[RMDB]
RNA sequence: GGGAACGACUCGAGUAGAGUCGAAAAACGACAAUAAUAAUGUGAAGGACUCAGUGGCCAAGUGGAUAACACGAUGGCGUUUGAAGCGAAAGGUACUGGGUUCGAGUACCAGAGUGAACAUCAACUCGCCCACCAUAGUGUUCGCACUAUGGUGGGCAAAAGAAACAACAACAACAAC
Reactivity to 2A3 in 0.01 (KOAc 150mM, MgCl2 10mM, bicine 150mM(pH8.5), 24C), signal-to-noise 2, nucleotides 027 to 126: a000c050g210a030c070a150a000u200a170a000u150a030a000u210g020u070g230a100a000g040g000a000c000u000c000a000g000u120g080g000c000c000a010a020g000u000g030g000a000u000a000a000c000a000c000g190a300u110g040g000c040g090u000u010u020g000a000a000g000c010g110a180a040a050g080g060u000a040c000u000g000g000g000u000u000c010g000a000g050u120a150c070c010a000g010a010g080u070g000a110a120c140a110u080c000a070a040c000u050c030
Source information: Structure probing data (2A3) for a 177-nucleotide construct. Values cover nucleotides 27 to 126. For 2A3, 696 sequencing reads were counted. The RNA was probed in 150 mM KOAc, 10 mM MgCl2 and 150 mM bicine (pH 8.5) at 24 C.